An RNA of 207 nucleotides, treated with 2A3 and read out base by base.
2A3 adducts were read by reverse transcription with SuperScript II with manganese.
The data come from the RNA Mapping Database (RMDB), library OK3TST.
Conditions: 150 mM KOAc, 10 mM MgCl2 and 150 mM bicine (pH 8.5), 24 C.
[RMDB]
RNA sequence: GGGAACGACUCGAGUAGAGUCGAAAAACAAGUUAAUAGGUAUGGUUUUUGUGUGACCACUAGAUGUUUUUUCAUUCAUUGGCCAAUGUGAUUAUAGGAAAACCAUGUUCAGCUUAAUUUAGGAAGAACACUGAUAGAGAUAACUGGCUAAACAGUACGUAACGUUCACGUUCGCGUGAACGUUACGAAAAGAAACAACAACAACAAC
Reactivity to 2A3 in 0.01 (KOAc 150mM, MgCl2 10mM, bicine 150mM(pH8.5), 24C), signal-to-noise 1, nucleotides 027 to 156: a010c010a020a060g070u070u090a080a050u070a190g040g070u170a110u070g070g040u030u000u050u020u080g050u020g070u070g000a040c000c000a040c010u020a000g060a050u020g100u040u000u030u050u010u140c080a100u160u030c000a000u000u090g040g000c000c030a060a120u120g010u040g060a090u010u130a120u190a120g080g000a000a090a000a000c000c000a060u030g020u000u050c010a040g000c040u080u070a040a090u210u070u090a040g060g000a030a080g030a020a010c030a000c050u020g040a000u040a110g070a000g010a000u030a240a070c020u020g000g000c010u040a140a160a000c010a010g060u080a040